[RMDB]
Chemical mapping of a 177-nucleotide RNA with DMS and 2A3.
RNA sequence: GGGAACGACUCGAGUAGAGUCGAAAAGUGCACGACUUCGGUCGUGCACAAAUAAAGGCAGUCGAGUGCGUAGGGCACAGUCAUACGCUGACGCCACGACAAAAAGUAACGUCUUCGGACGUUACAAGAUAGAGGACAAGUUCGCUUGUCCUCUAUCAAAAGAAACAACAACAACAAC
Reactivity to DMS in 0.01 (KOAc 150mM, MgCl2 10mM, bicine 150mM(pH8.5), 24C), signal-to-noise 5, nucleotides 027 to 126: g010u000g000c000a010c000g010a010c000u000u020c160g030g000u000c000g050u000g010c000a000c010a000a050a070u020a080a090a110g020g020c020a080g020u000c020g010a130g030u010g020c000g020u000a020g010g010g010c010a130c160a090g020u000c030a060u000a020c050g020c020u000g010a020c030g010c010c010a080c110g010a050c100a050a070a060a070a110g010u000a000a000c000g000u000c010u000u010c170g020g000a020c000g020u000u000a000c000a040a060
Reactivity to 2A3 in 0.01 (KOAc 150mM, MgCl2 10mM, bicine 150mM(pH8.5), 24C), signal-to-noise 6, nucleotides 027 to 126: g000u000g000c000a010c010g020a010c040u050u120c280g030g000u000c000g010u010g000c000a000c000a010a000a000u010a000a020a000g040g000c070a040g020u010c020g100a070g230u190g020c010g010u010a040g020g020g000c050a070c060a300g030u040c010a020u000a050c010g020c050u060g010a010c010g000c030c010a030c040g100a030c040a020a120a020a000a010g000u010a000a000c000g010u010c000u030u070c200g070g000a000c000g000u000u010a000c000a010a000

Source: RMDB library M2PK50, as collected in RNAgym. The 2A3 profile rests on 13,735 reads.